[RMDB]
Structure probing data (DMS) for a 177-nucleotide construct. For DMS the reverse transcriptase was MarathonRT. Conditions: 150 mM KOAc, 10 mM MgCl2 and 150 mM bicine (pH 8.5), 24 C.

RNA sequence: GGGAACGACUCGAGUAGAGUCGAAAACUGCUGGACCUGGCCAACCCUAGCGCUUACCUGGCGCACGAGGAGGCGCAGCGGCGUCGCCUGGAAGCUGCCCGGCGGGCGGCGGCCGAGGAACGGAAGGAAUGGGAGCAGUAUUCGUACUGCUCCCAUUAAAAGAAACAACAACAACAAC
Reactivity to DMS in 0.01 (KOAc 150mM, MgCl2 10mM, bicine 150mM(pH8.5), 24C), signal-to-noise 1, nucleotides 027 to 126: c040u000g000c040u000g000g000a280c050c010u000g000g000c010c000a100a230c030c040c070u010a100g020c030g000c010u000u000a200c120c060u000g020g000c020g030c060a030c110g030a030g020g010a150g020g000c020g000c010a150g000c050g000g000c050g010u000c000g000c000c010u010g000g020a050a130g000c060u020g020c000c000c050g020g030c070g000g010g020c030g000g020c030g020g020c020c020g000a110g020g020a060a140c040g000g000a150a060g000g000